[RMDB]
Chemical mapping of a 177-nucleotide RNA with 2A3 and DMS. The RNA was probed in 150 mM KOAc, 10 mM MgCl2 and 150 mM bicine (pH 8.5) at 24 C.
RNA sequence: GGGAACGACUCGAGUAGAGUCGAAAAGUUCUAGUAGGAAGUACUAUGUGAUUUUUUUUUUUUUUUCACACUCAGAACAUAAGUGUCAAUGCUCUCGCUAUGAAGAGGAGUCACAGGAUUGGCUGGGUACUCUCCAAAUUUUCGAAUUUGGAGAGUAAAAAGAAACAACAACAACAAC
Reactivity to 2A3 in 0.01 (KOAc 150mM, MgCl2 10mM, bicine 150mM(pH8.5), 24C), signal-to-noise 8, nucleotides 027 to 126: g030u040u030c030u020a050g030u050a030g060g190a250a040g070u040a050c040u060a100u150g020u010g010a030u010u010u000u000u000u000u000u000u000u000u000u060u080u060u030c020a030c000a010c020u030c010a020g020a140a080c010a040u090a140a040g020u020g030u070c050a100a120u160g050c010u010c000u000c030g050c080u140a110u300g060a090a050g020a020g050g030a050g040u010c000a010c010a030g040g080a090u080u070g040g000c010u010g000g010g010
Reactivity to DMS in 0.01 (KOAc 150mM, MgCl2 10mM, bicine 150mM(pH8.5), 24C), signal-to-noise 4, nucleotides 027 to 126: g000u000u010c020u000a050g000u000a070g000g020a120a150g000u010a050c030u000a050u020g010u010g000a000u000u000u000u000u000u000u000u000u000u000u090u010u020u000u020c030a040c070a050c040u010c020a030g010a030a030c020a030u010a040a050g020u000g010u000c040a050a090u010g000c010u000c010u000c030g010c240u020a090u020g000a050a050g000a020g000g000a100g010u000c030a010c040a040g000g000a110u020u010g010g010c010u010g000g010g010